[RMDB]
Structure probing data (2A3 and DMS) for a 177-nucleotide construct.
RNA sequence: GGGAACGACUCGAGUAGAGUCGAAAACCAUCCAGGGGAGCCGAACGGCAUGGGAGGGCCGGCGGCACAGGGUUACAGCCCCGUAGGCGCACCCUGGGAUGGACCCCGGCGGAGGUCCCUGAGUAGGGGUCAAAUAUCAGUUCGCUGAUAUUUGACCAAAAGAAACAACAACAACAAC
Reactivity to 2A3 in 0.01 (KOAc 150mM, MgCl2 10mM, bicine 150mM(pH8.5), 24C), signal-to-noise 2, nucleotides 027 to 126: c000c010a000u000c000c000a000g010g000g010g010a020g000c000c010g010a030a020c010g020g000c010a040u040g030g020g030a050g010g000g000c010c000g000g020c010g010g000c010a000c020a010g010g000g000u030u130a040c020a020g010c010c010c000c020g000u010a000g000g030c020g030c090a050c000c000c000u000g010g030g000a000u010g010g010a070c000c020c000c000g030g040c020g040g040a030g000g020u030c000c000c020u070g030a060g090u140a060g050g070
Reactivity to DMS in 0.01 (KOAc 150mM, MgCl2 10mM, bicine 150mM(pH8.5), 24C), signal-to-noise 4, nucleotides 027 to 126: c000c010a010u010c020c000a020g000g000g010g010a300g010c000c000g000a000a020c020g000g020c010a020u010g010g030g000a150g010g000g000c000c010g010g040c000g000g000c080a000c010a280g020g020g000u000u050a090c240a100g010c000c000c000c020g000u000a300g000g000c020g010c150a300c000c000c000u000g020g010g010a010u000g000g000a220c110c010c000c000g000g010c100g030g000a130g000g000u000c020c000c010u010g000a070g030u020a110g010g020
The reactions ran in a buffer of 150 mM KOAc, 10 mM MgCl2 and 150 mM bicine (pH 8.5), at 24 C. DMS adducts were read by reverse transcription with MarathonRT. Values cover nucleotides 27 to 126.